[RMDB]
Chemical mapping of a 207-nucleotide RNA with 2A3. For 2A3 the reverse transcriptase was SuperScript II with manganese. The RNA was probed in 150 mM KOAc, 10 mM MgCl2 and 150 mM bicine (pH 8.5) at 24 C.
RNA sequence: GGGAACGACUCGAGUAGAGUCGAAAACUGCAAAAAAUACAAACUCUUACGCUUUAGCUGCCUAAAAACCAGCUAGCGUGACUUCUACAAGAUUGCUUGUGUCCUGUUAGAAGUCUCAAAAUAGCAAGCUACGGUUACGAAAUUGUCUAGUUUCGUGCGUUAAAGCUUACUUCGGUAAGCUUUAACGAAAAGAAACAACAACAACAAC
Reactivity to 2A3 in 0.01 (KOAc 150mM, MgCl2 10mM, bicine 150mM(pH8.5), 24C), signal-to-noise 1, nucleotides 027 to 156: c090u180g010c060a140a000a040a040a080a040u240a090c110a080a290a130c040u260c060u300u100a020c030g030c030u110u140u100a000g010c000u020g000c050c000u100a130a080a010a010a040c020c000a000g000c000u000a000g000c000g000u010g000a000c000u000u000c000u030a020c000a010a000g000a030u000u110g060c020u020u010g000u010g000u020c000c000u000g000u010u010a000g000a040a000g030u000c010u030c040a110a200a030a050u160a000g000c000a000a000g000c060u100a040c050g160g020u060u080a000c040g030a050a140a140u080u010g090u070c040u090a020g010u000u000u020c040g020u110g110